[RMDB]
Structure probing data (2A3 and DMS) for a 207-nucleotide construct.
The reactions ran in a buffer of 150 mM KOAc, 10 mM MgCl2 and 150 mM bicine (pH 8.5), at 24 C.
For DMS, 1,643 sequencing reads were counted.
2A3 is a SHAPE reagent: it acylates the 2'-hydroxyl of flexible nucleotides of all four kinds.
The 2A3 profile rests on 586 reads.
RNA sequence: GGGAACGACUCGAGUAGAGUCGAAAAAGUUUGUAUAAGCACUGUUUAAUUGUCCCAGUGCAUGCCAAUUGGUGUUUACAGACGAGUAUGGUAUUGACCAUAUGAUACUAUUCUCUCUCUCAGGAGAGGAGAAUAGAUAACUACAAAGGAUAGACAACUAUAGGAGCCUAUUCGUAGGCUCCUAUAGAAAAGAAACAACAACAACAAC
Reactivity to 2A3 in 0.01 (KOAc 150mM, MgCl2 10mM, bicine 150mM(pH8.5), 24C), signal-to-noise 1, nucleotides 027 to 156: a000g030u070u090u050g010u000a060u030a160a000g000c000a000c030u000g100u090u220u110a040a120u090u100g100u120c010c010c000a010g010u020g050c010a000u060g010c000c080a220a210u190u300g040g000u020g050u050u050u080a030c000a010g000a060c050g060a020g040u000a000u010g030g000u020a100u250u190g170a020c000c000a000u000a000u000g050a000u020a060c000u000a000u000u000c010u000c000u000c000u030c000u020c160a190g110g110a000g080a010g020g060a000g000a010a000u000a010g000a000u050a010a040c060u170a030c050a060a150a010g030g000a000u020a030g000a020c030a070a040
Reactivity to DMS in 0.01 (KOAc 150mM, MgCl2 10mM, bicine 150mM(pH8.5), 24C), signal-to-noise 1, nucleotides 027 to 156: a100g010u000u000u000g000u000a100u000a080a250g030c010a010c010u000g020u000u010u010a090a100u000u010g030u010c020c130c030a100g000u000g020c000a100u000g020c100c050a110a150u020u000g030g000u000g030u000u000u010a080c040a060g010a090c010g000a230g020u000a030u010g000g010u000a180u000u000g000a100c000c010a030u000a020u020g000a170u000a100c030u000a000u000u000c000u010c000u010c000u000c000u010c140a220g020g020a030g000a080g070g010a000g010a030a000u000a000g000a120u000a030a080c070u000a180c110a100a050a090g000g010a300u010a060g000a120c030a080a160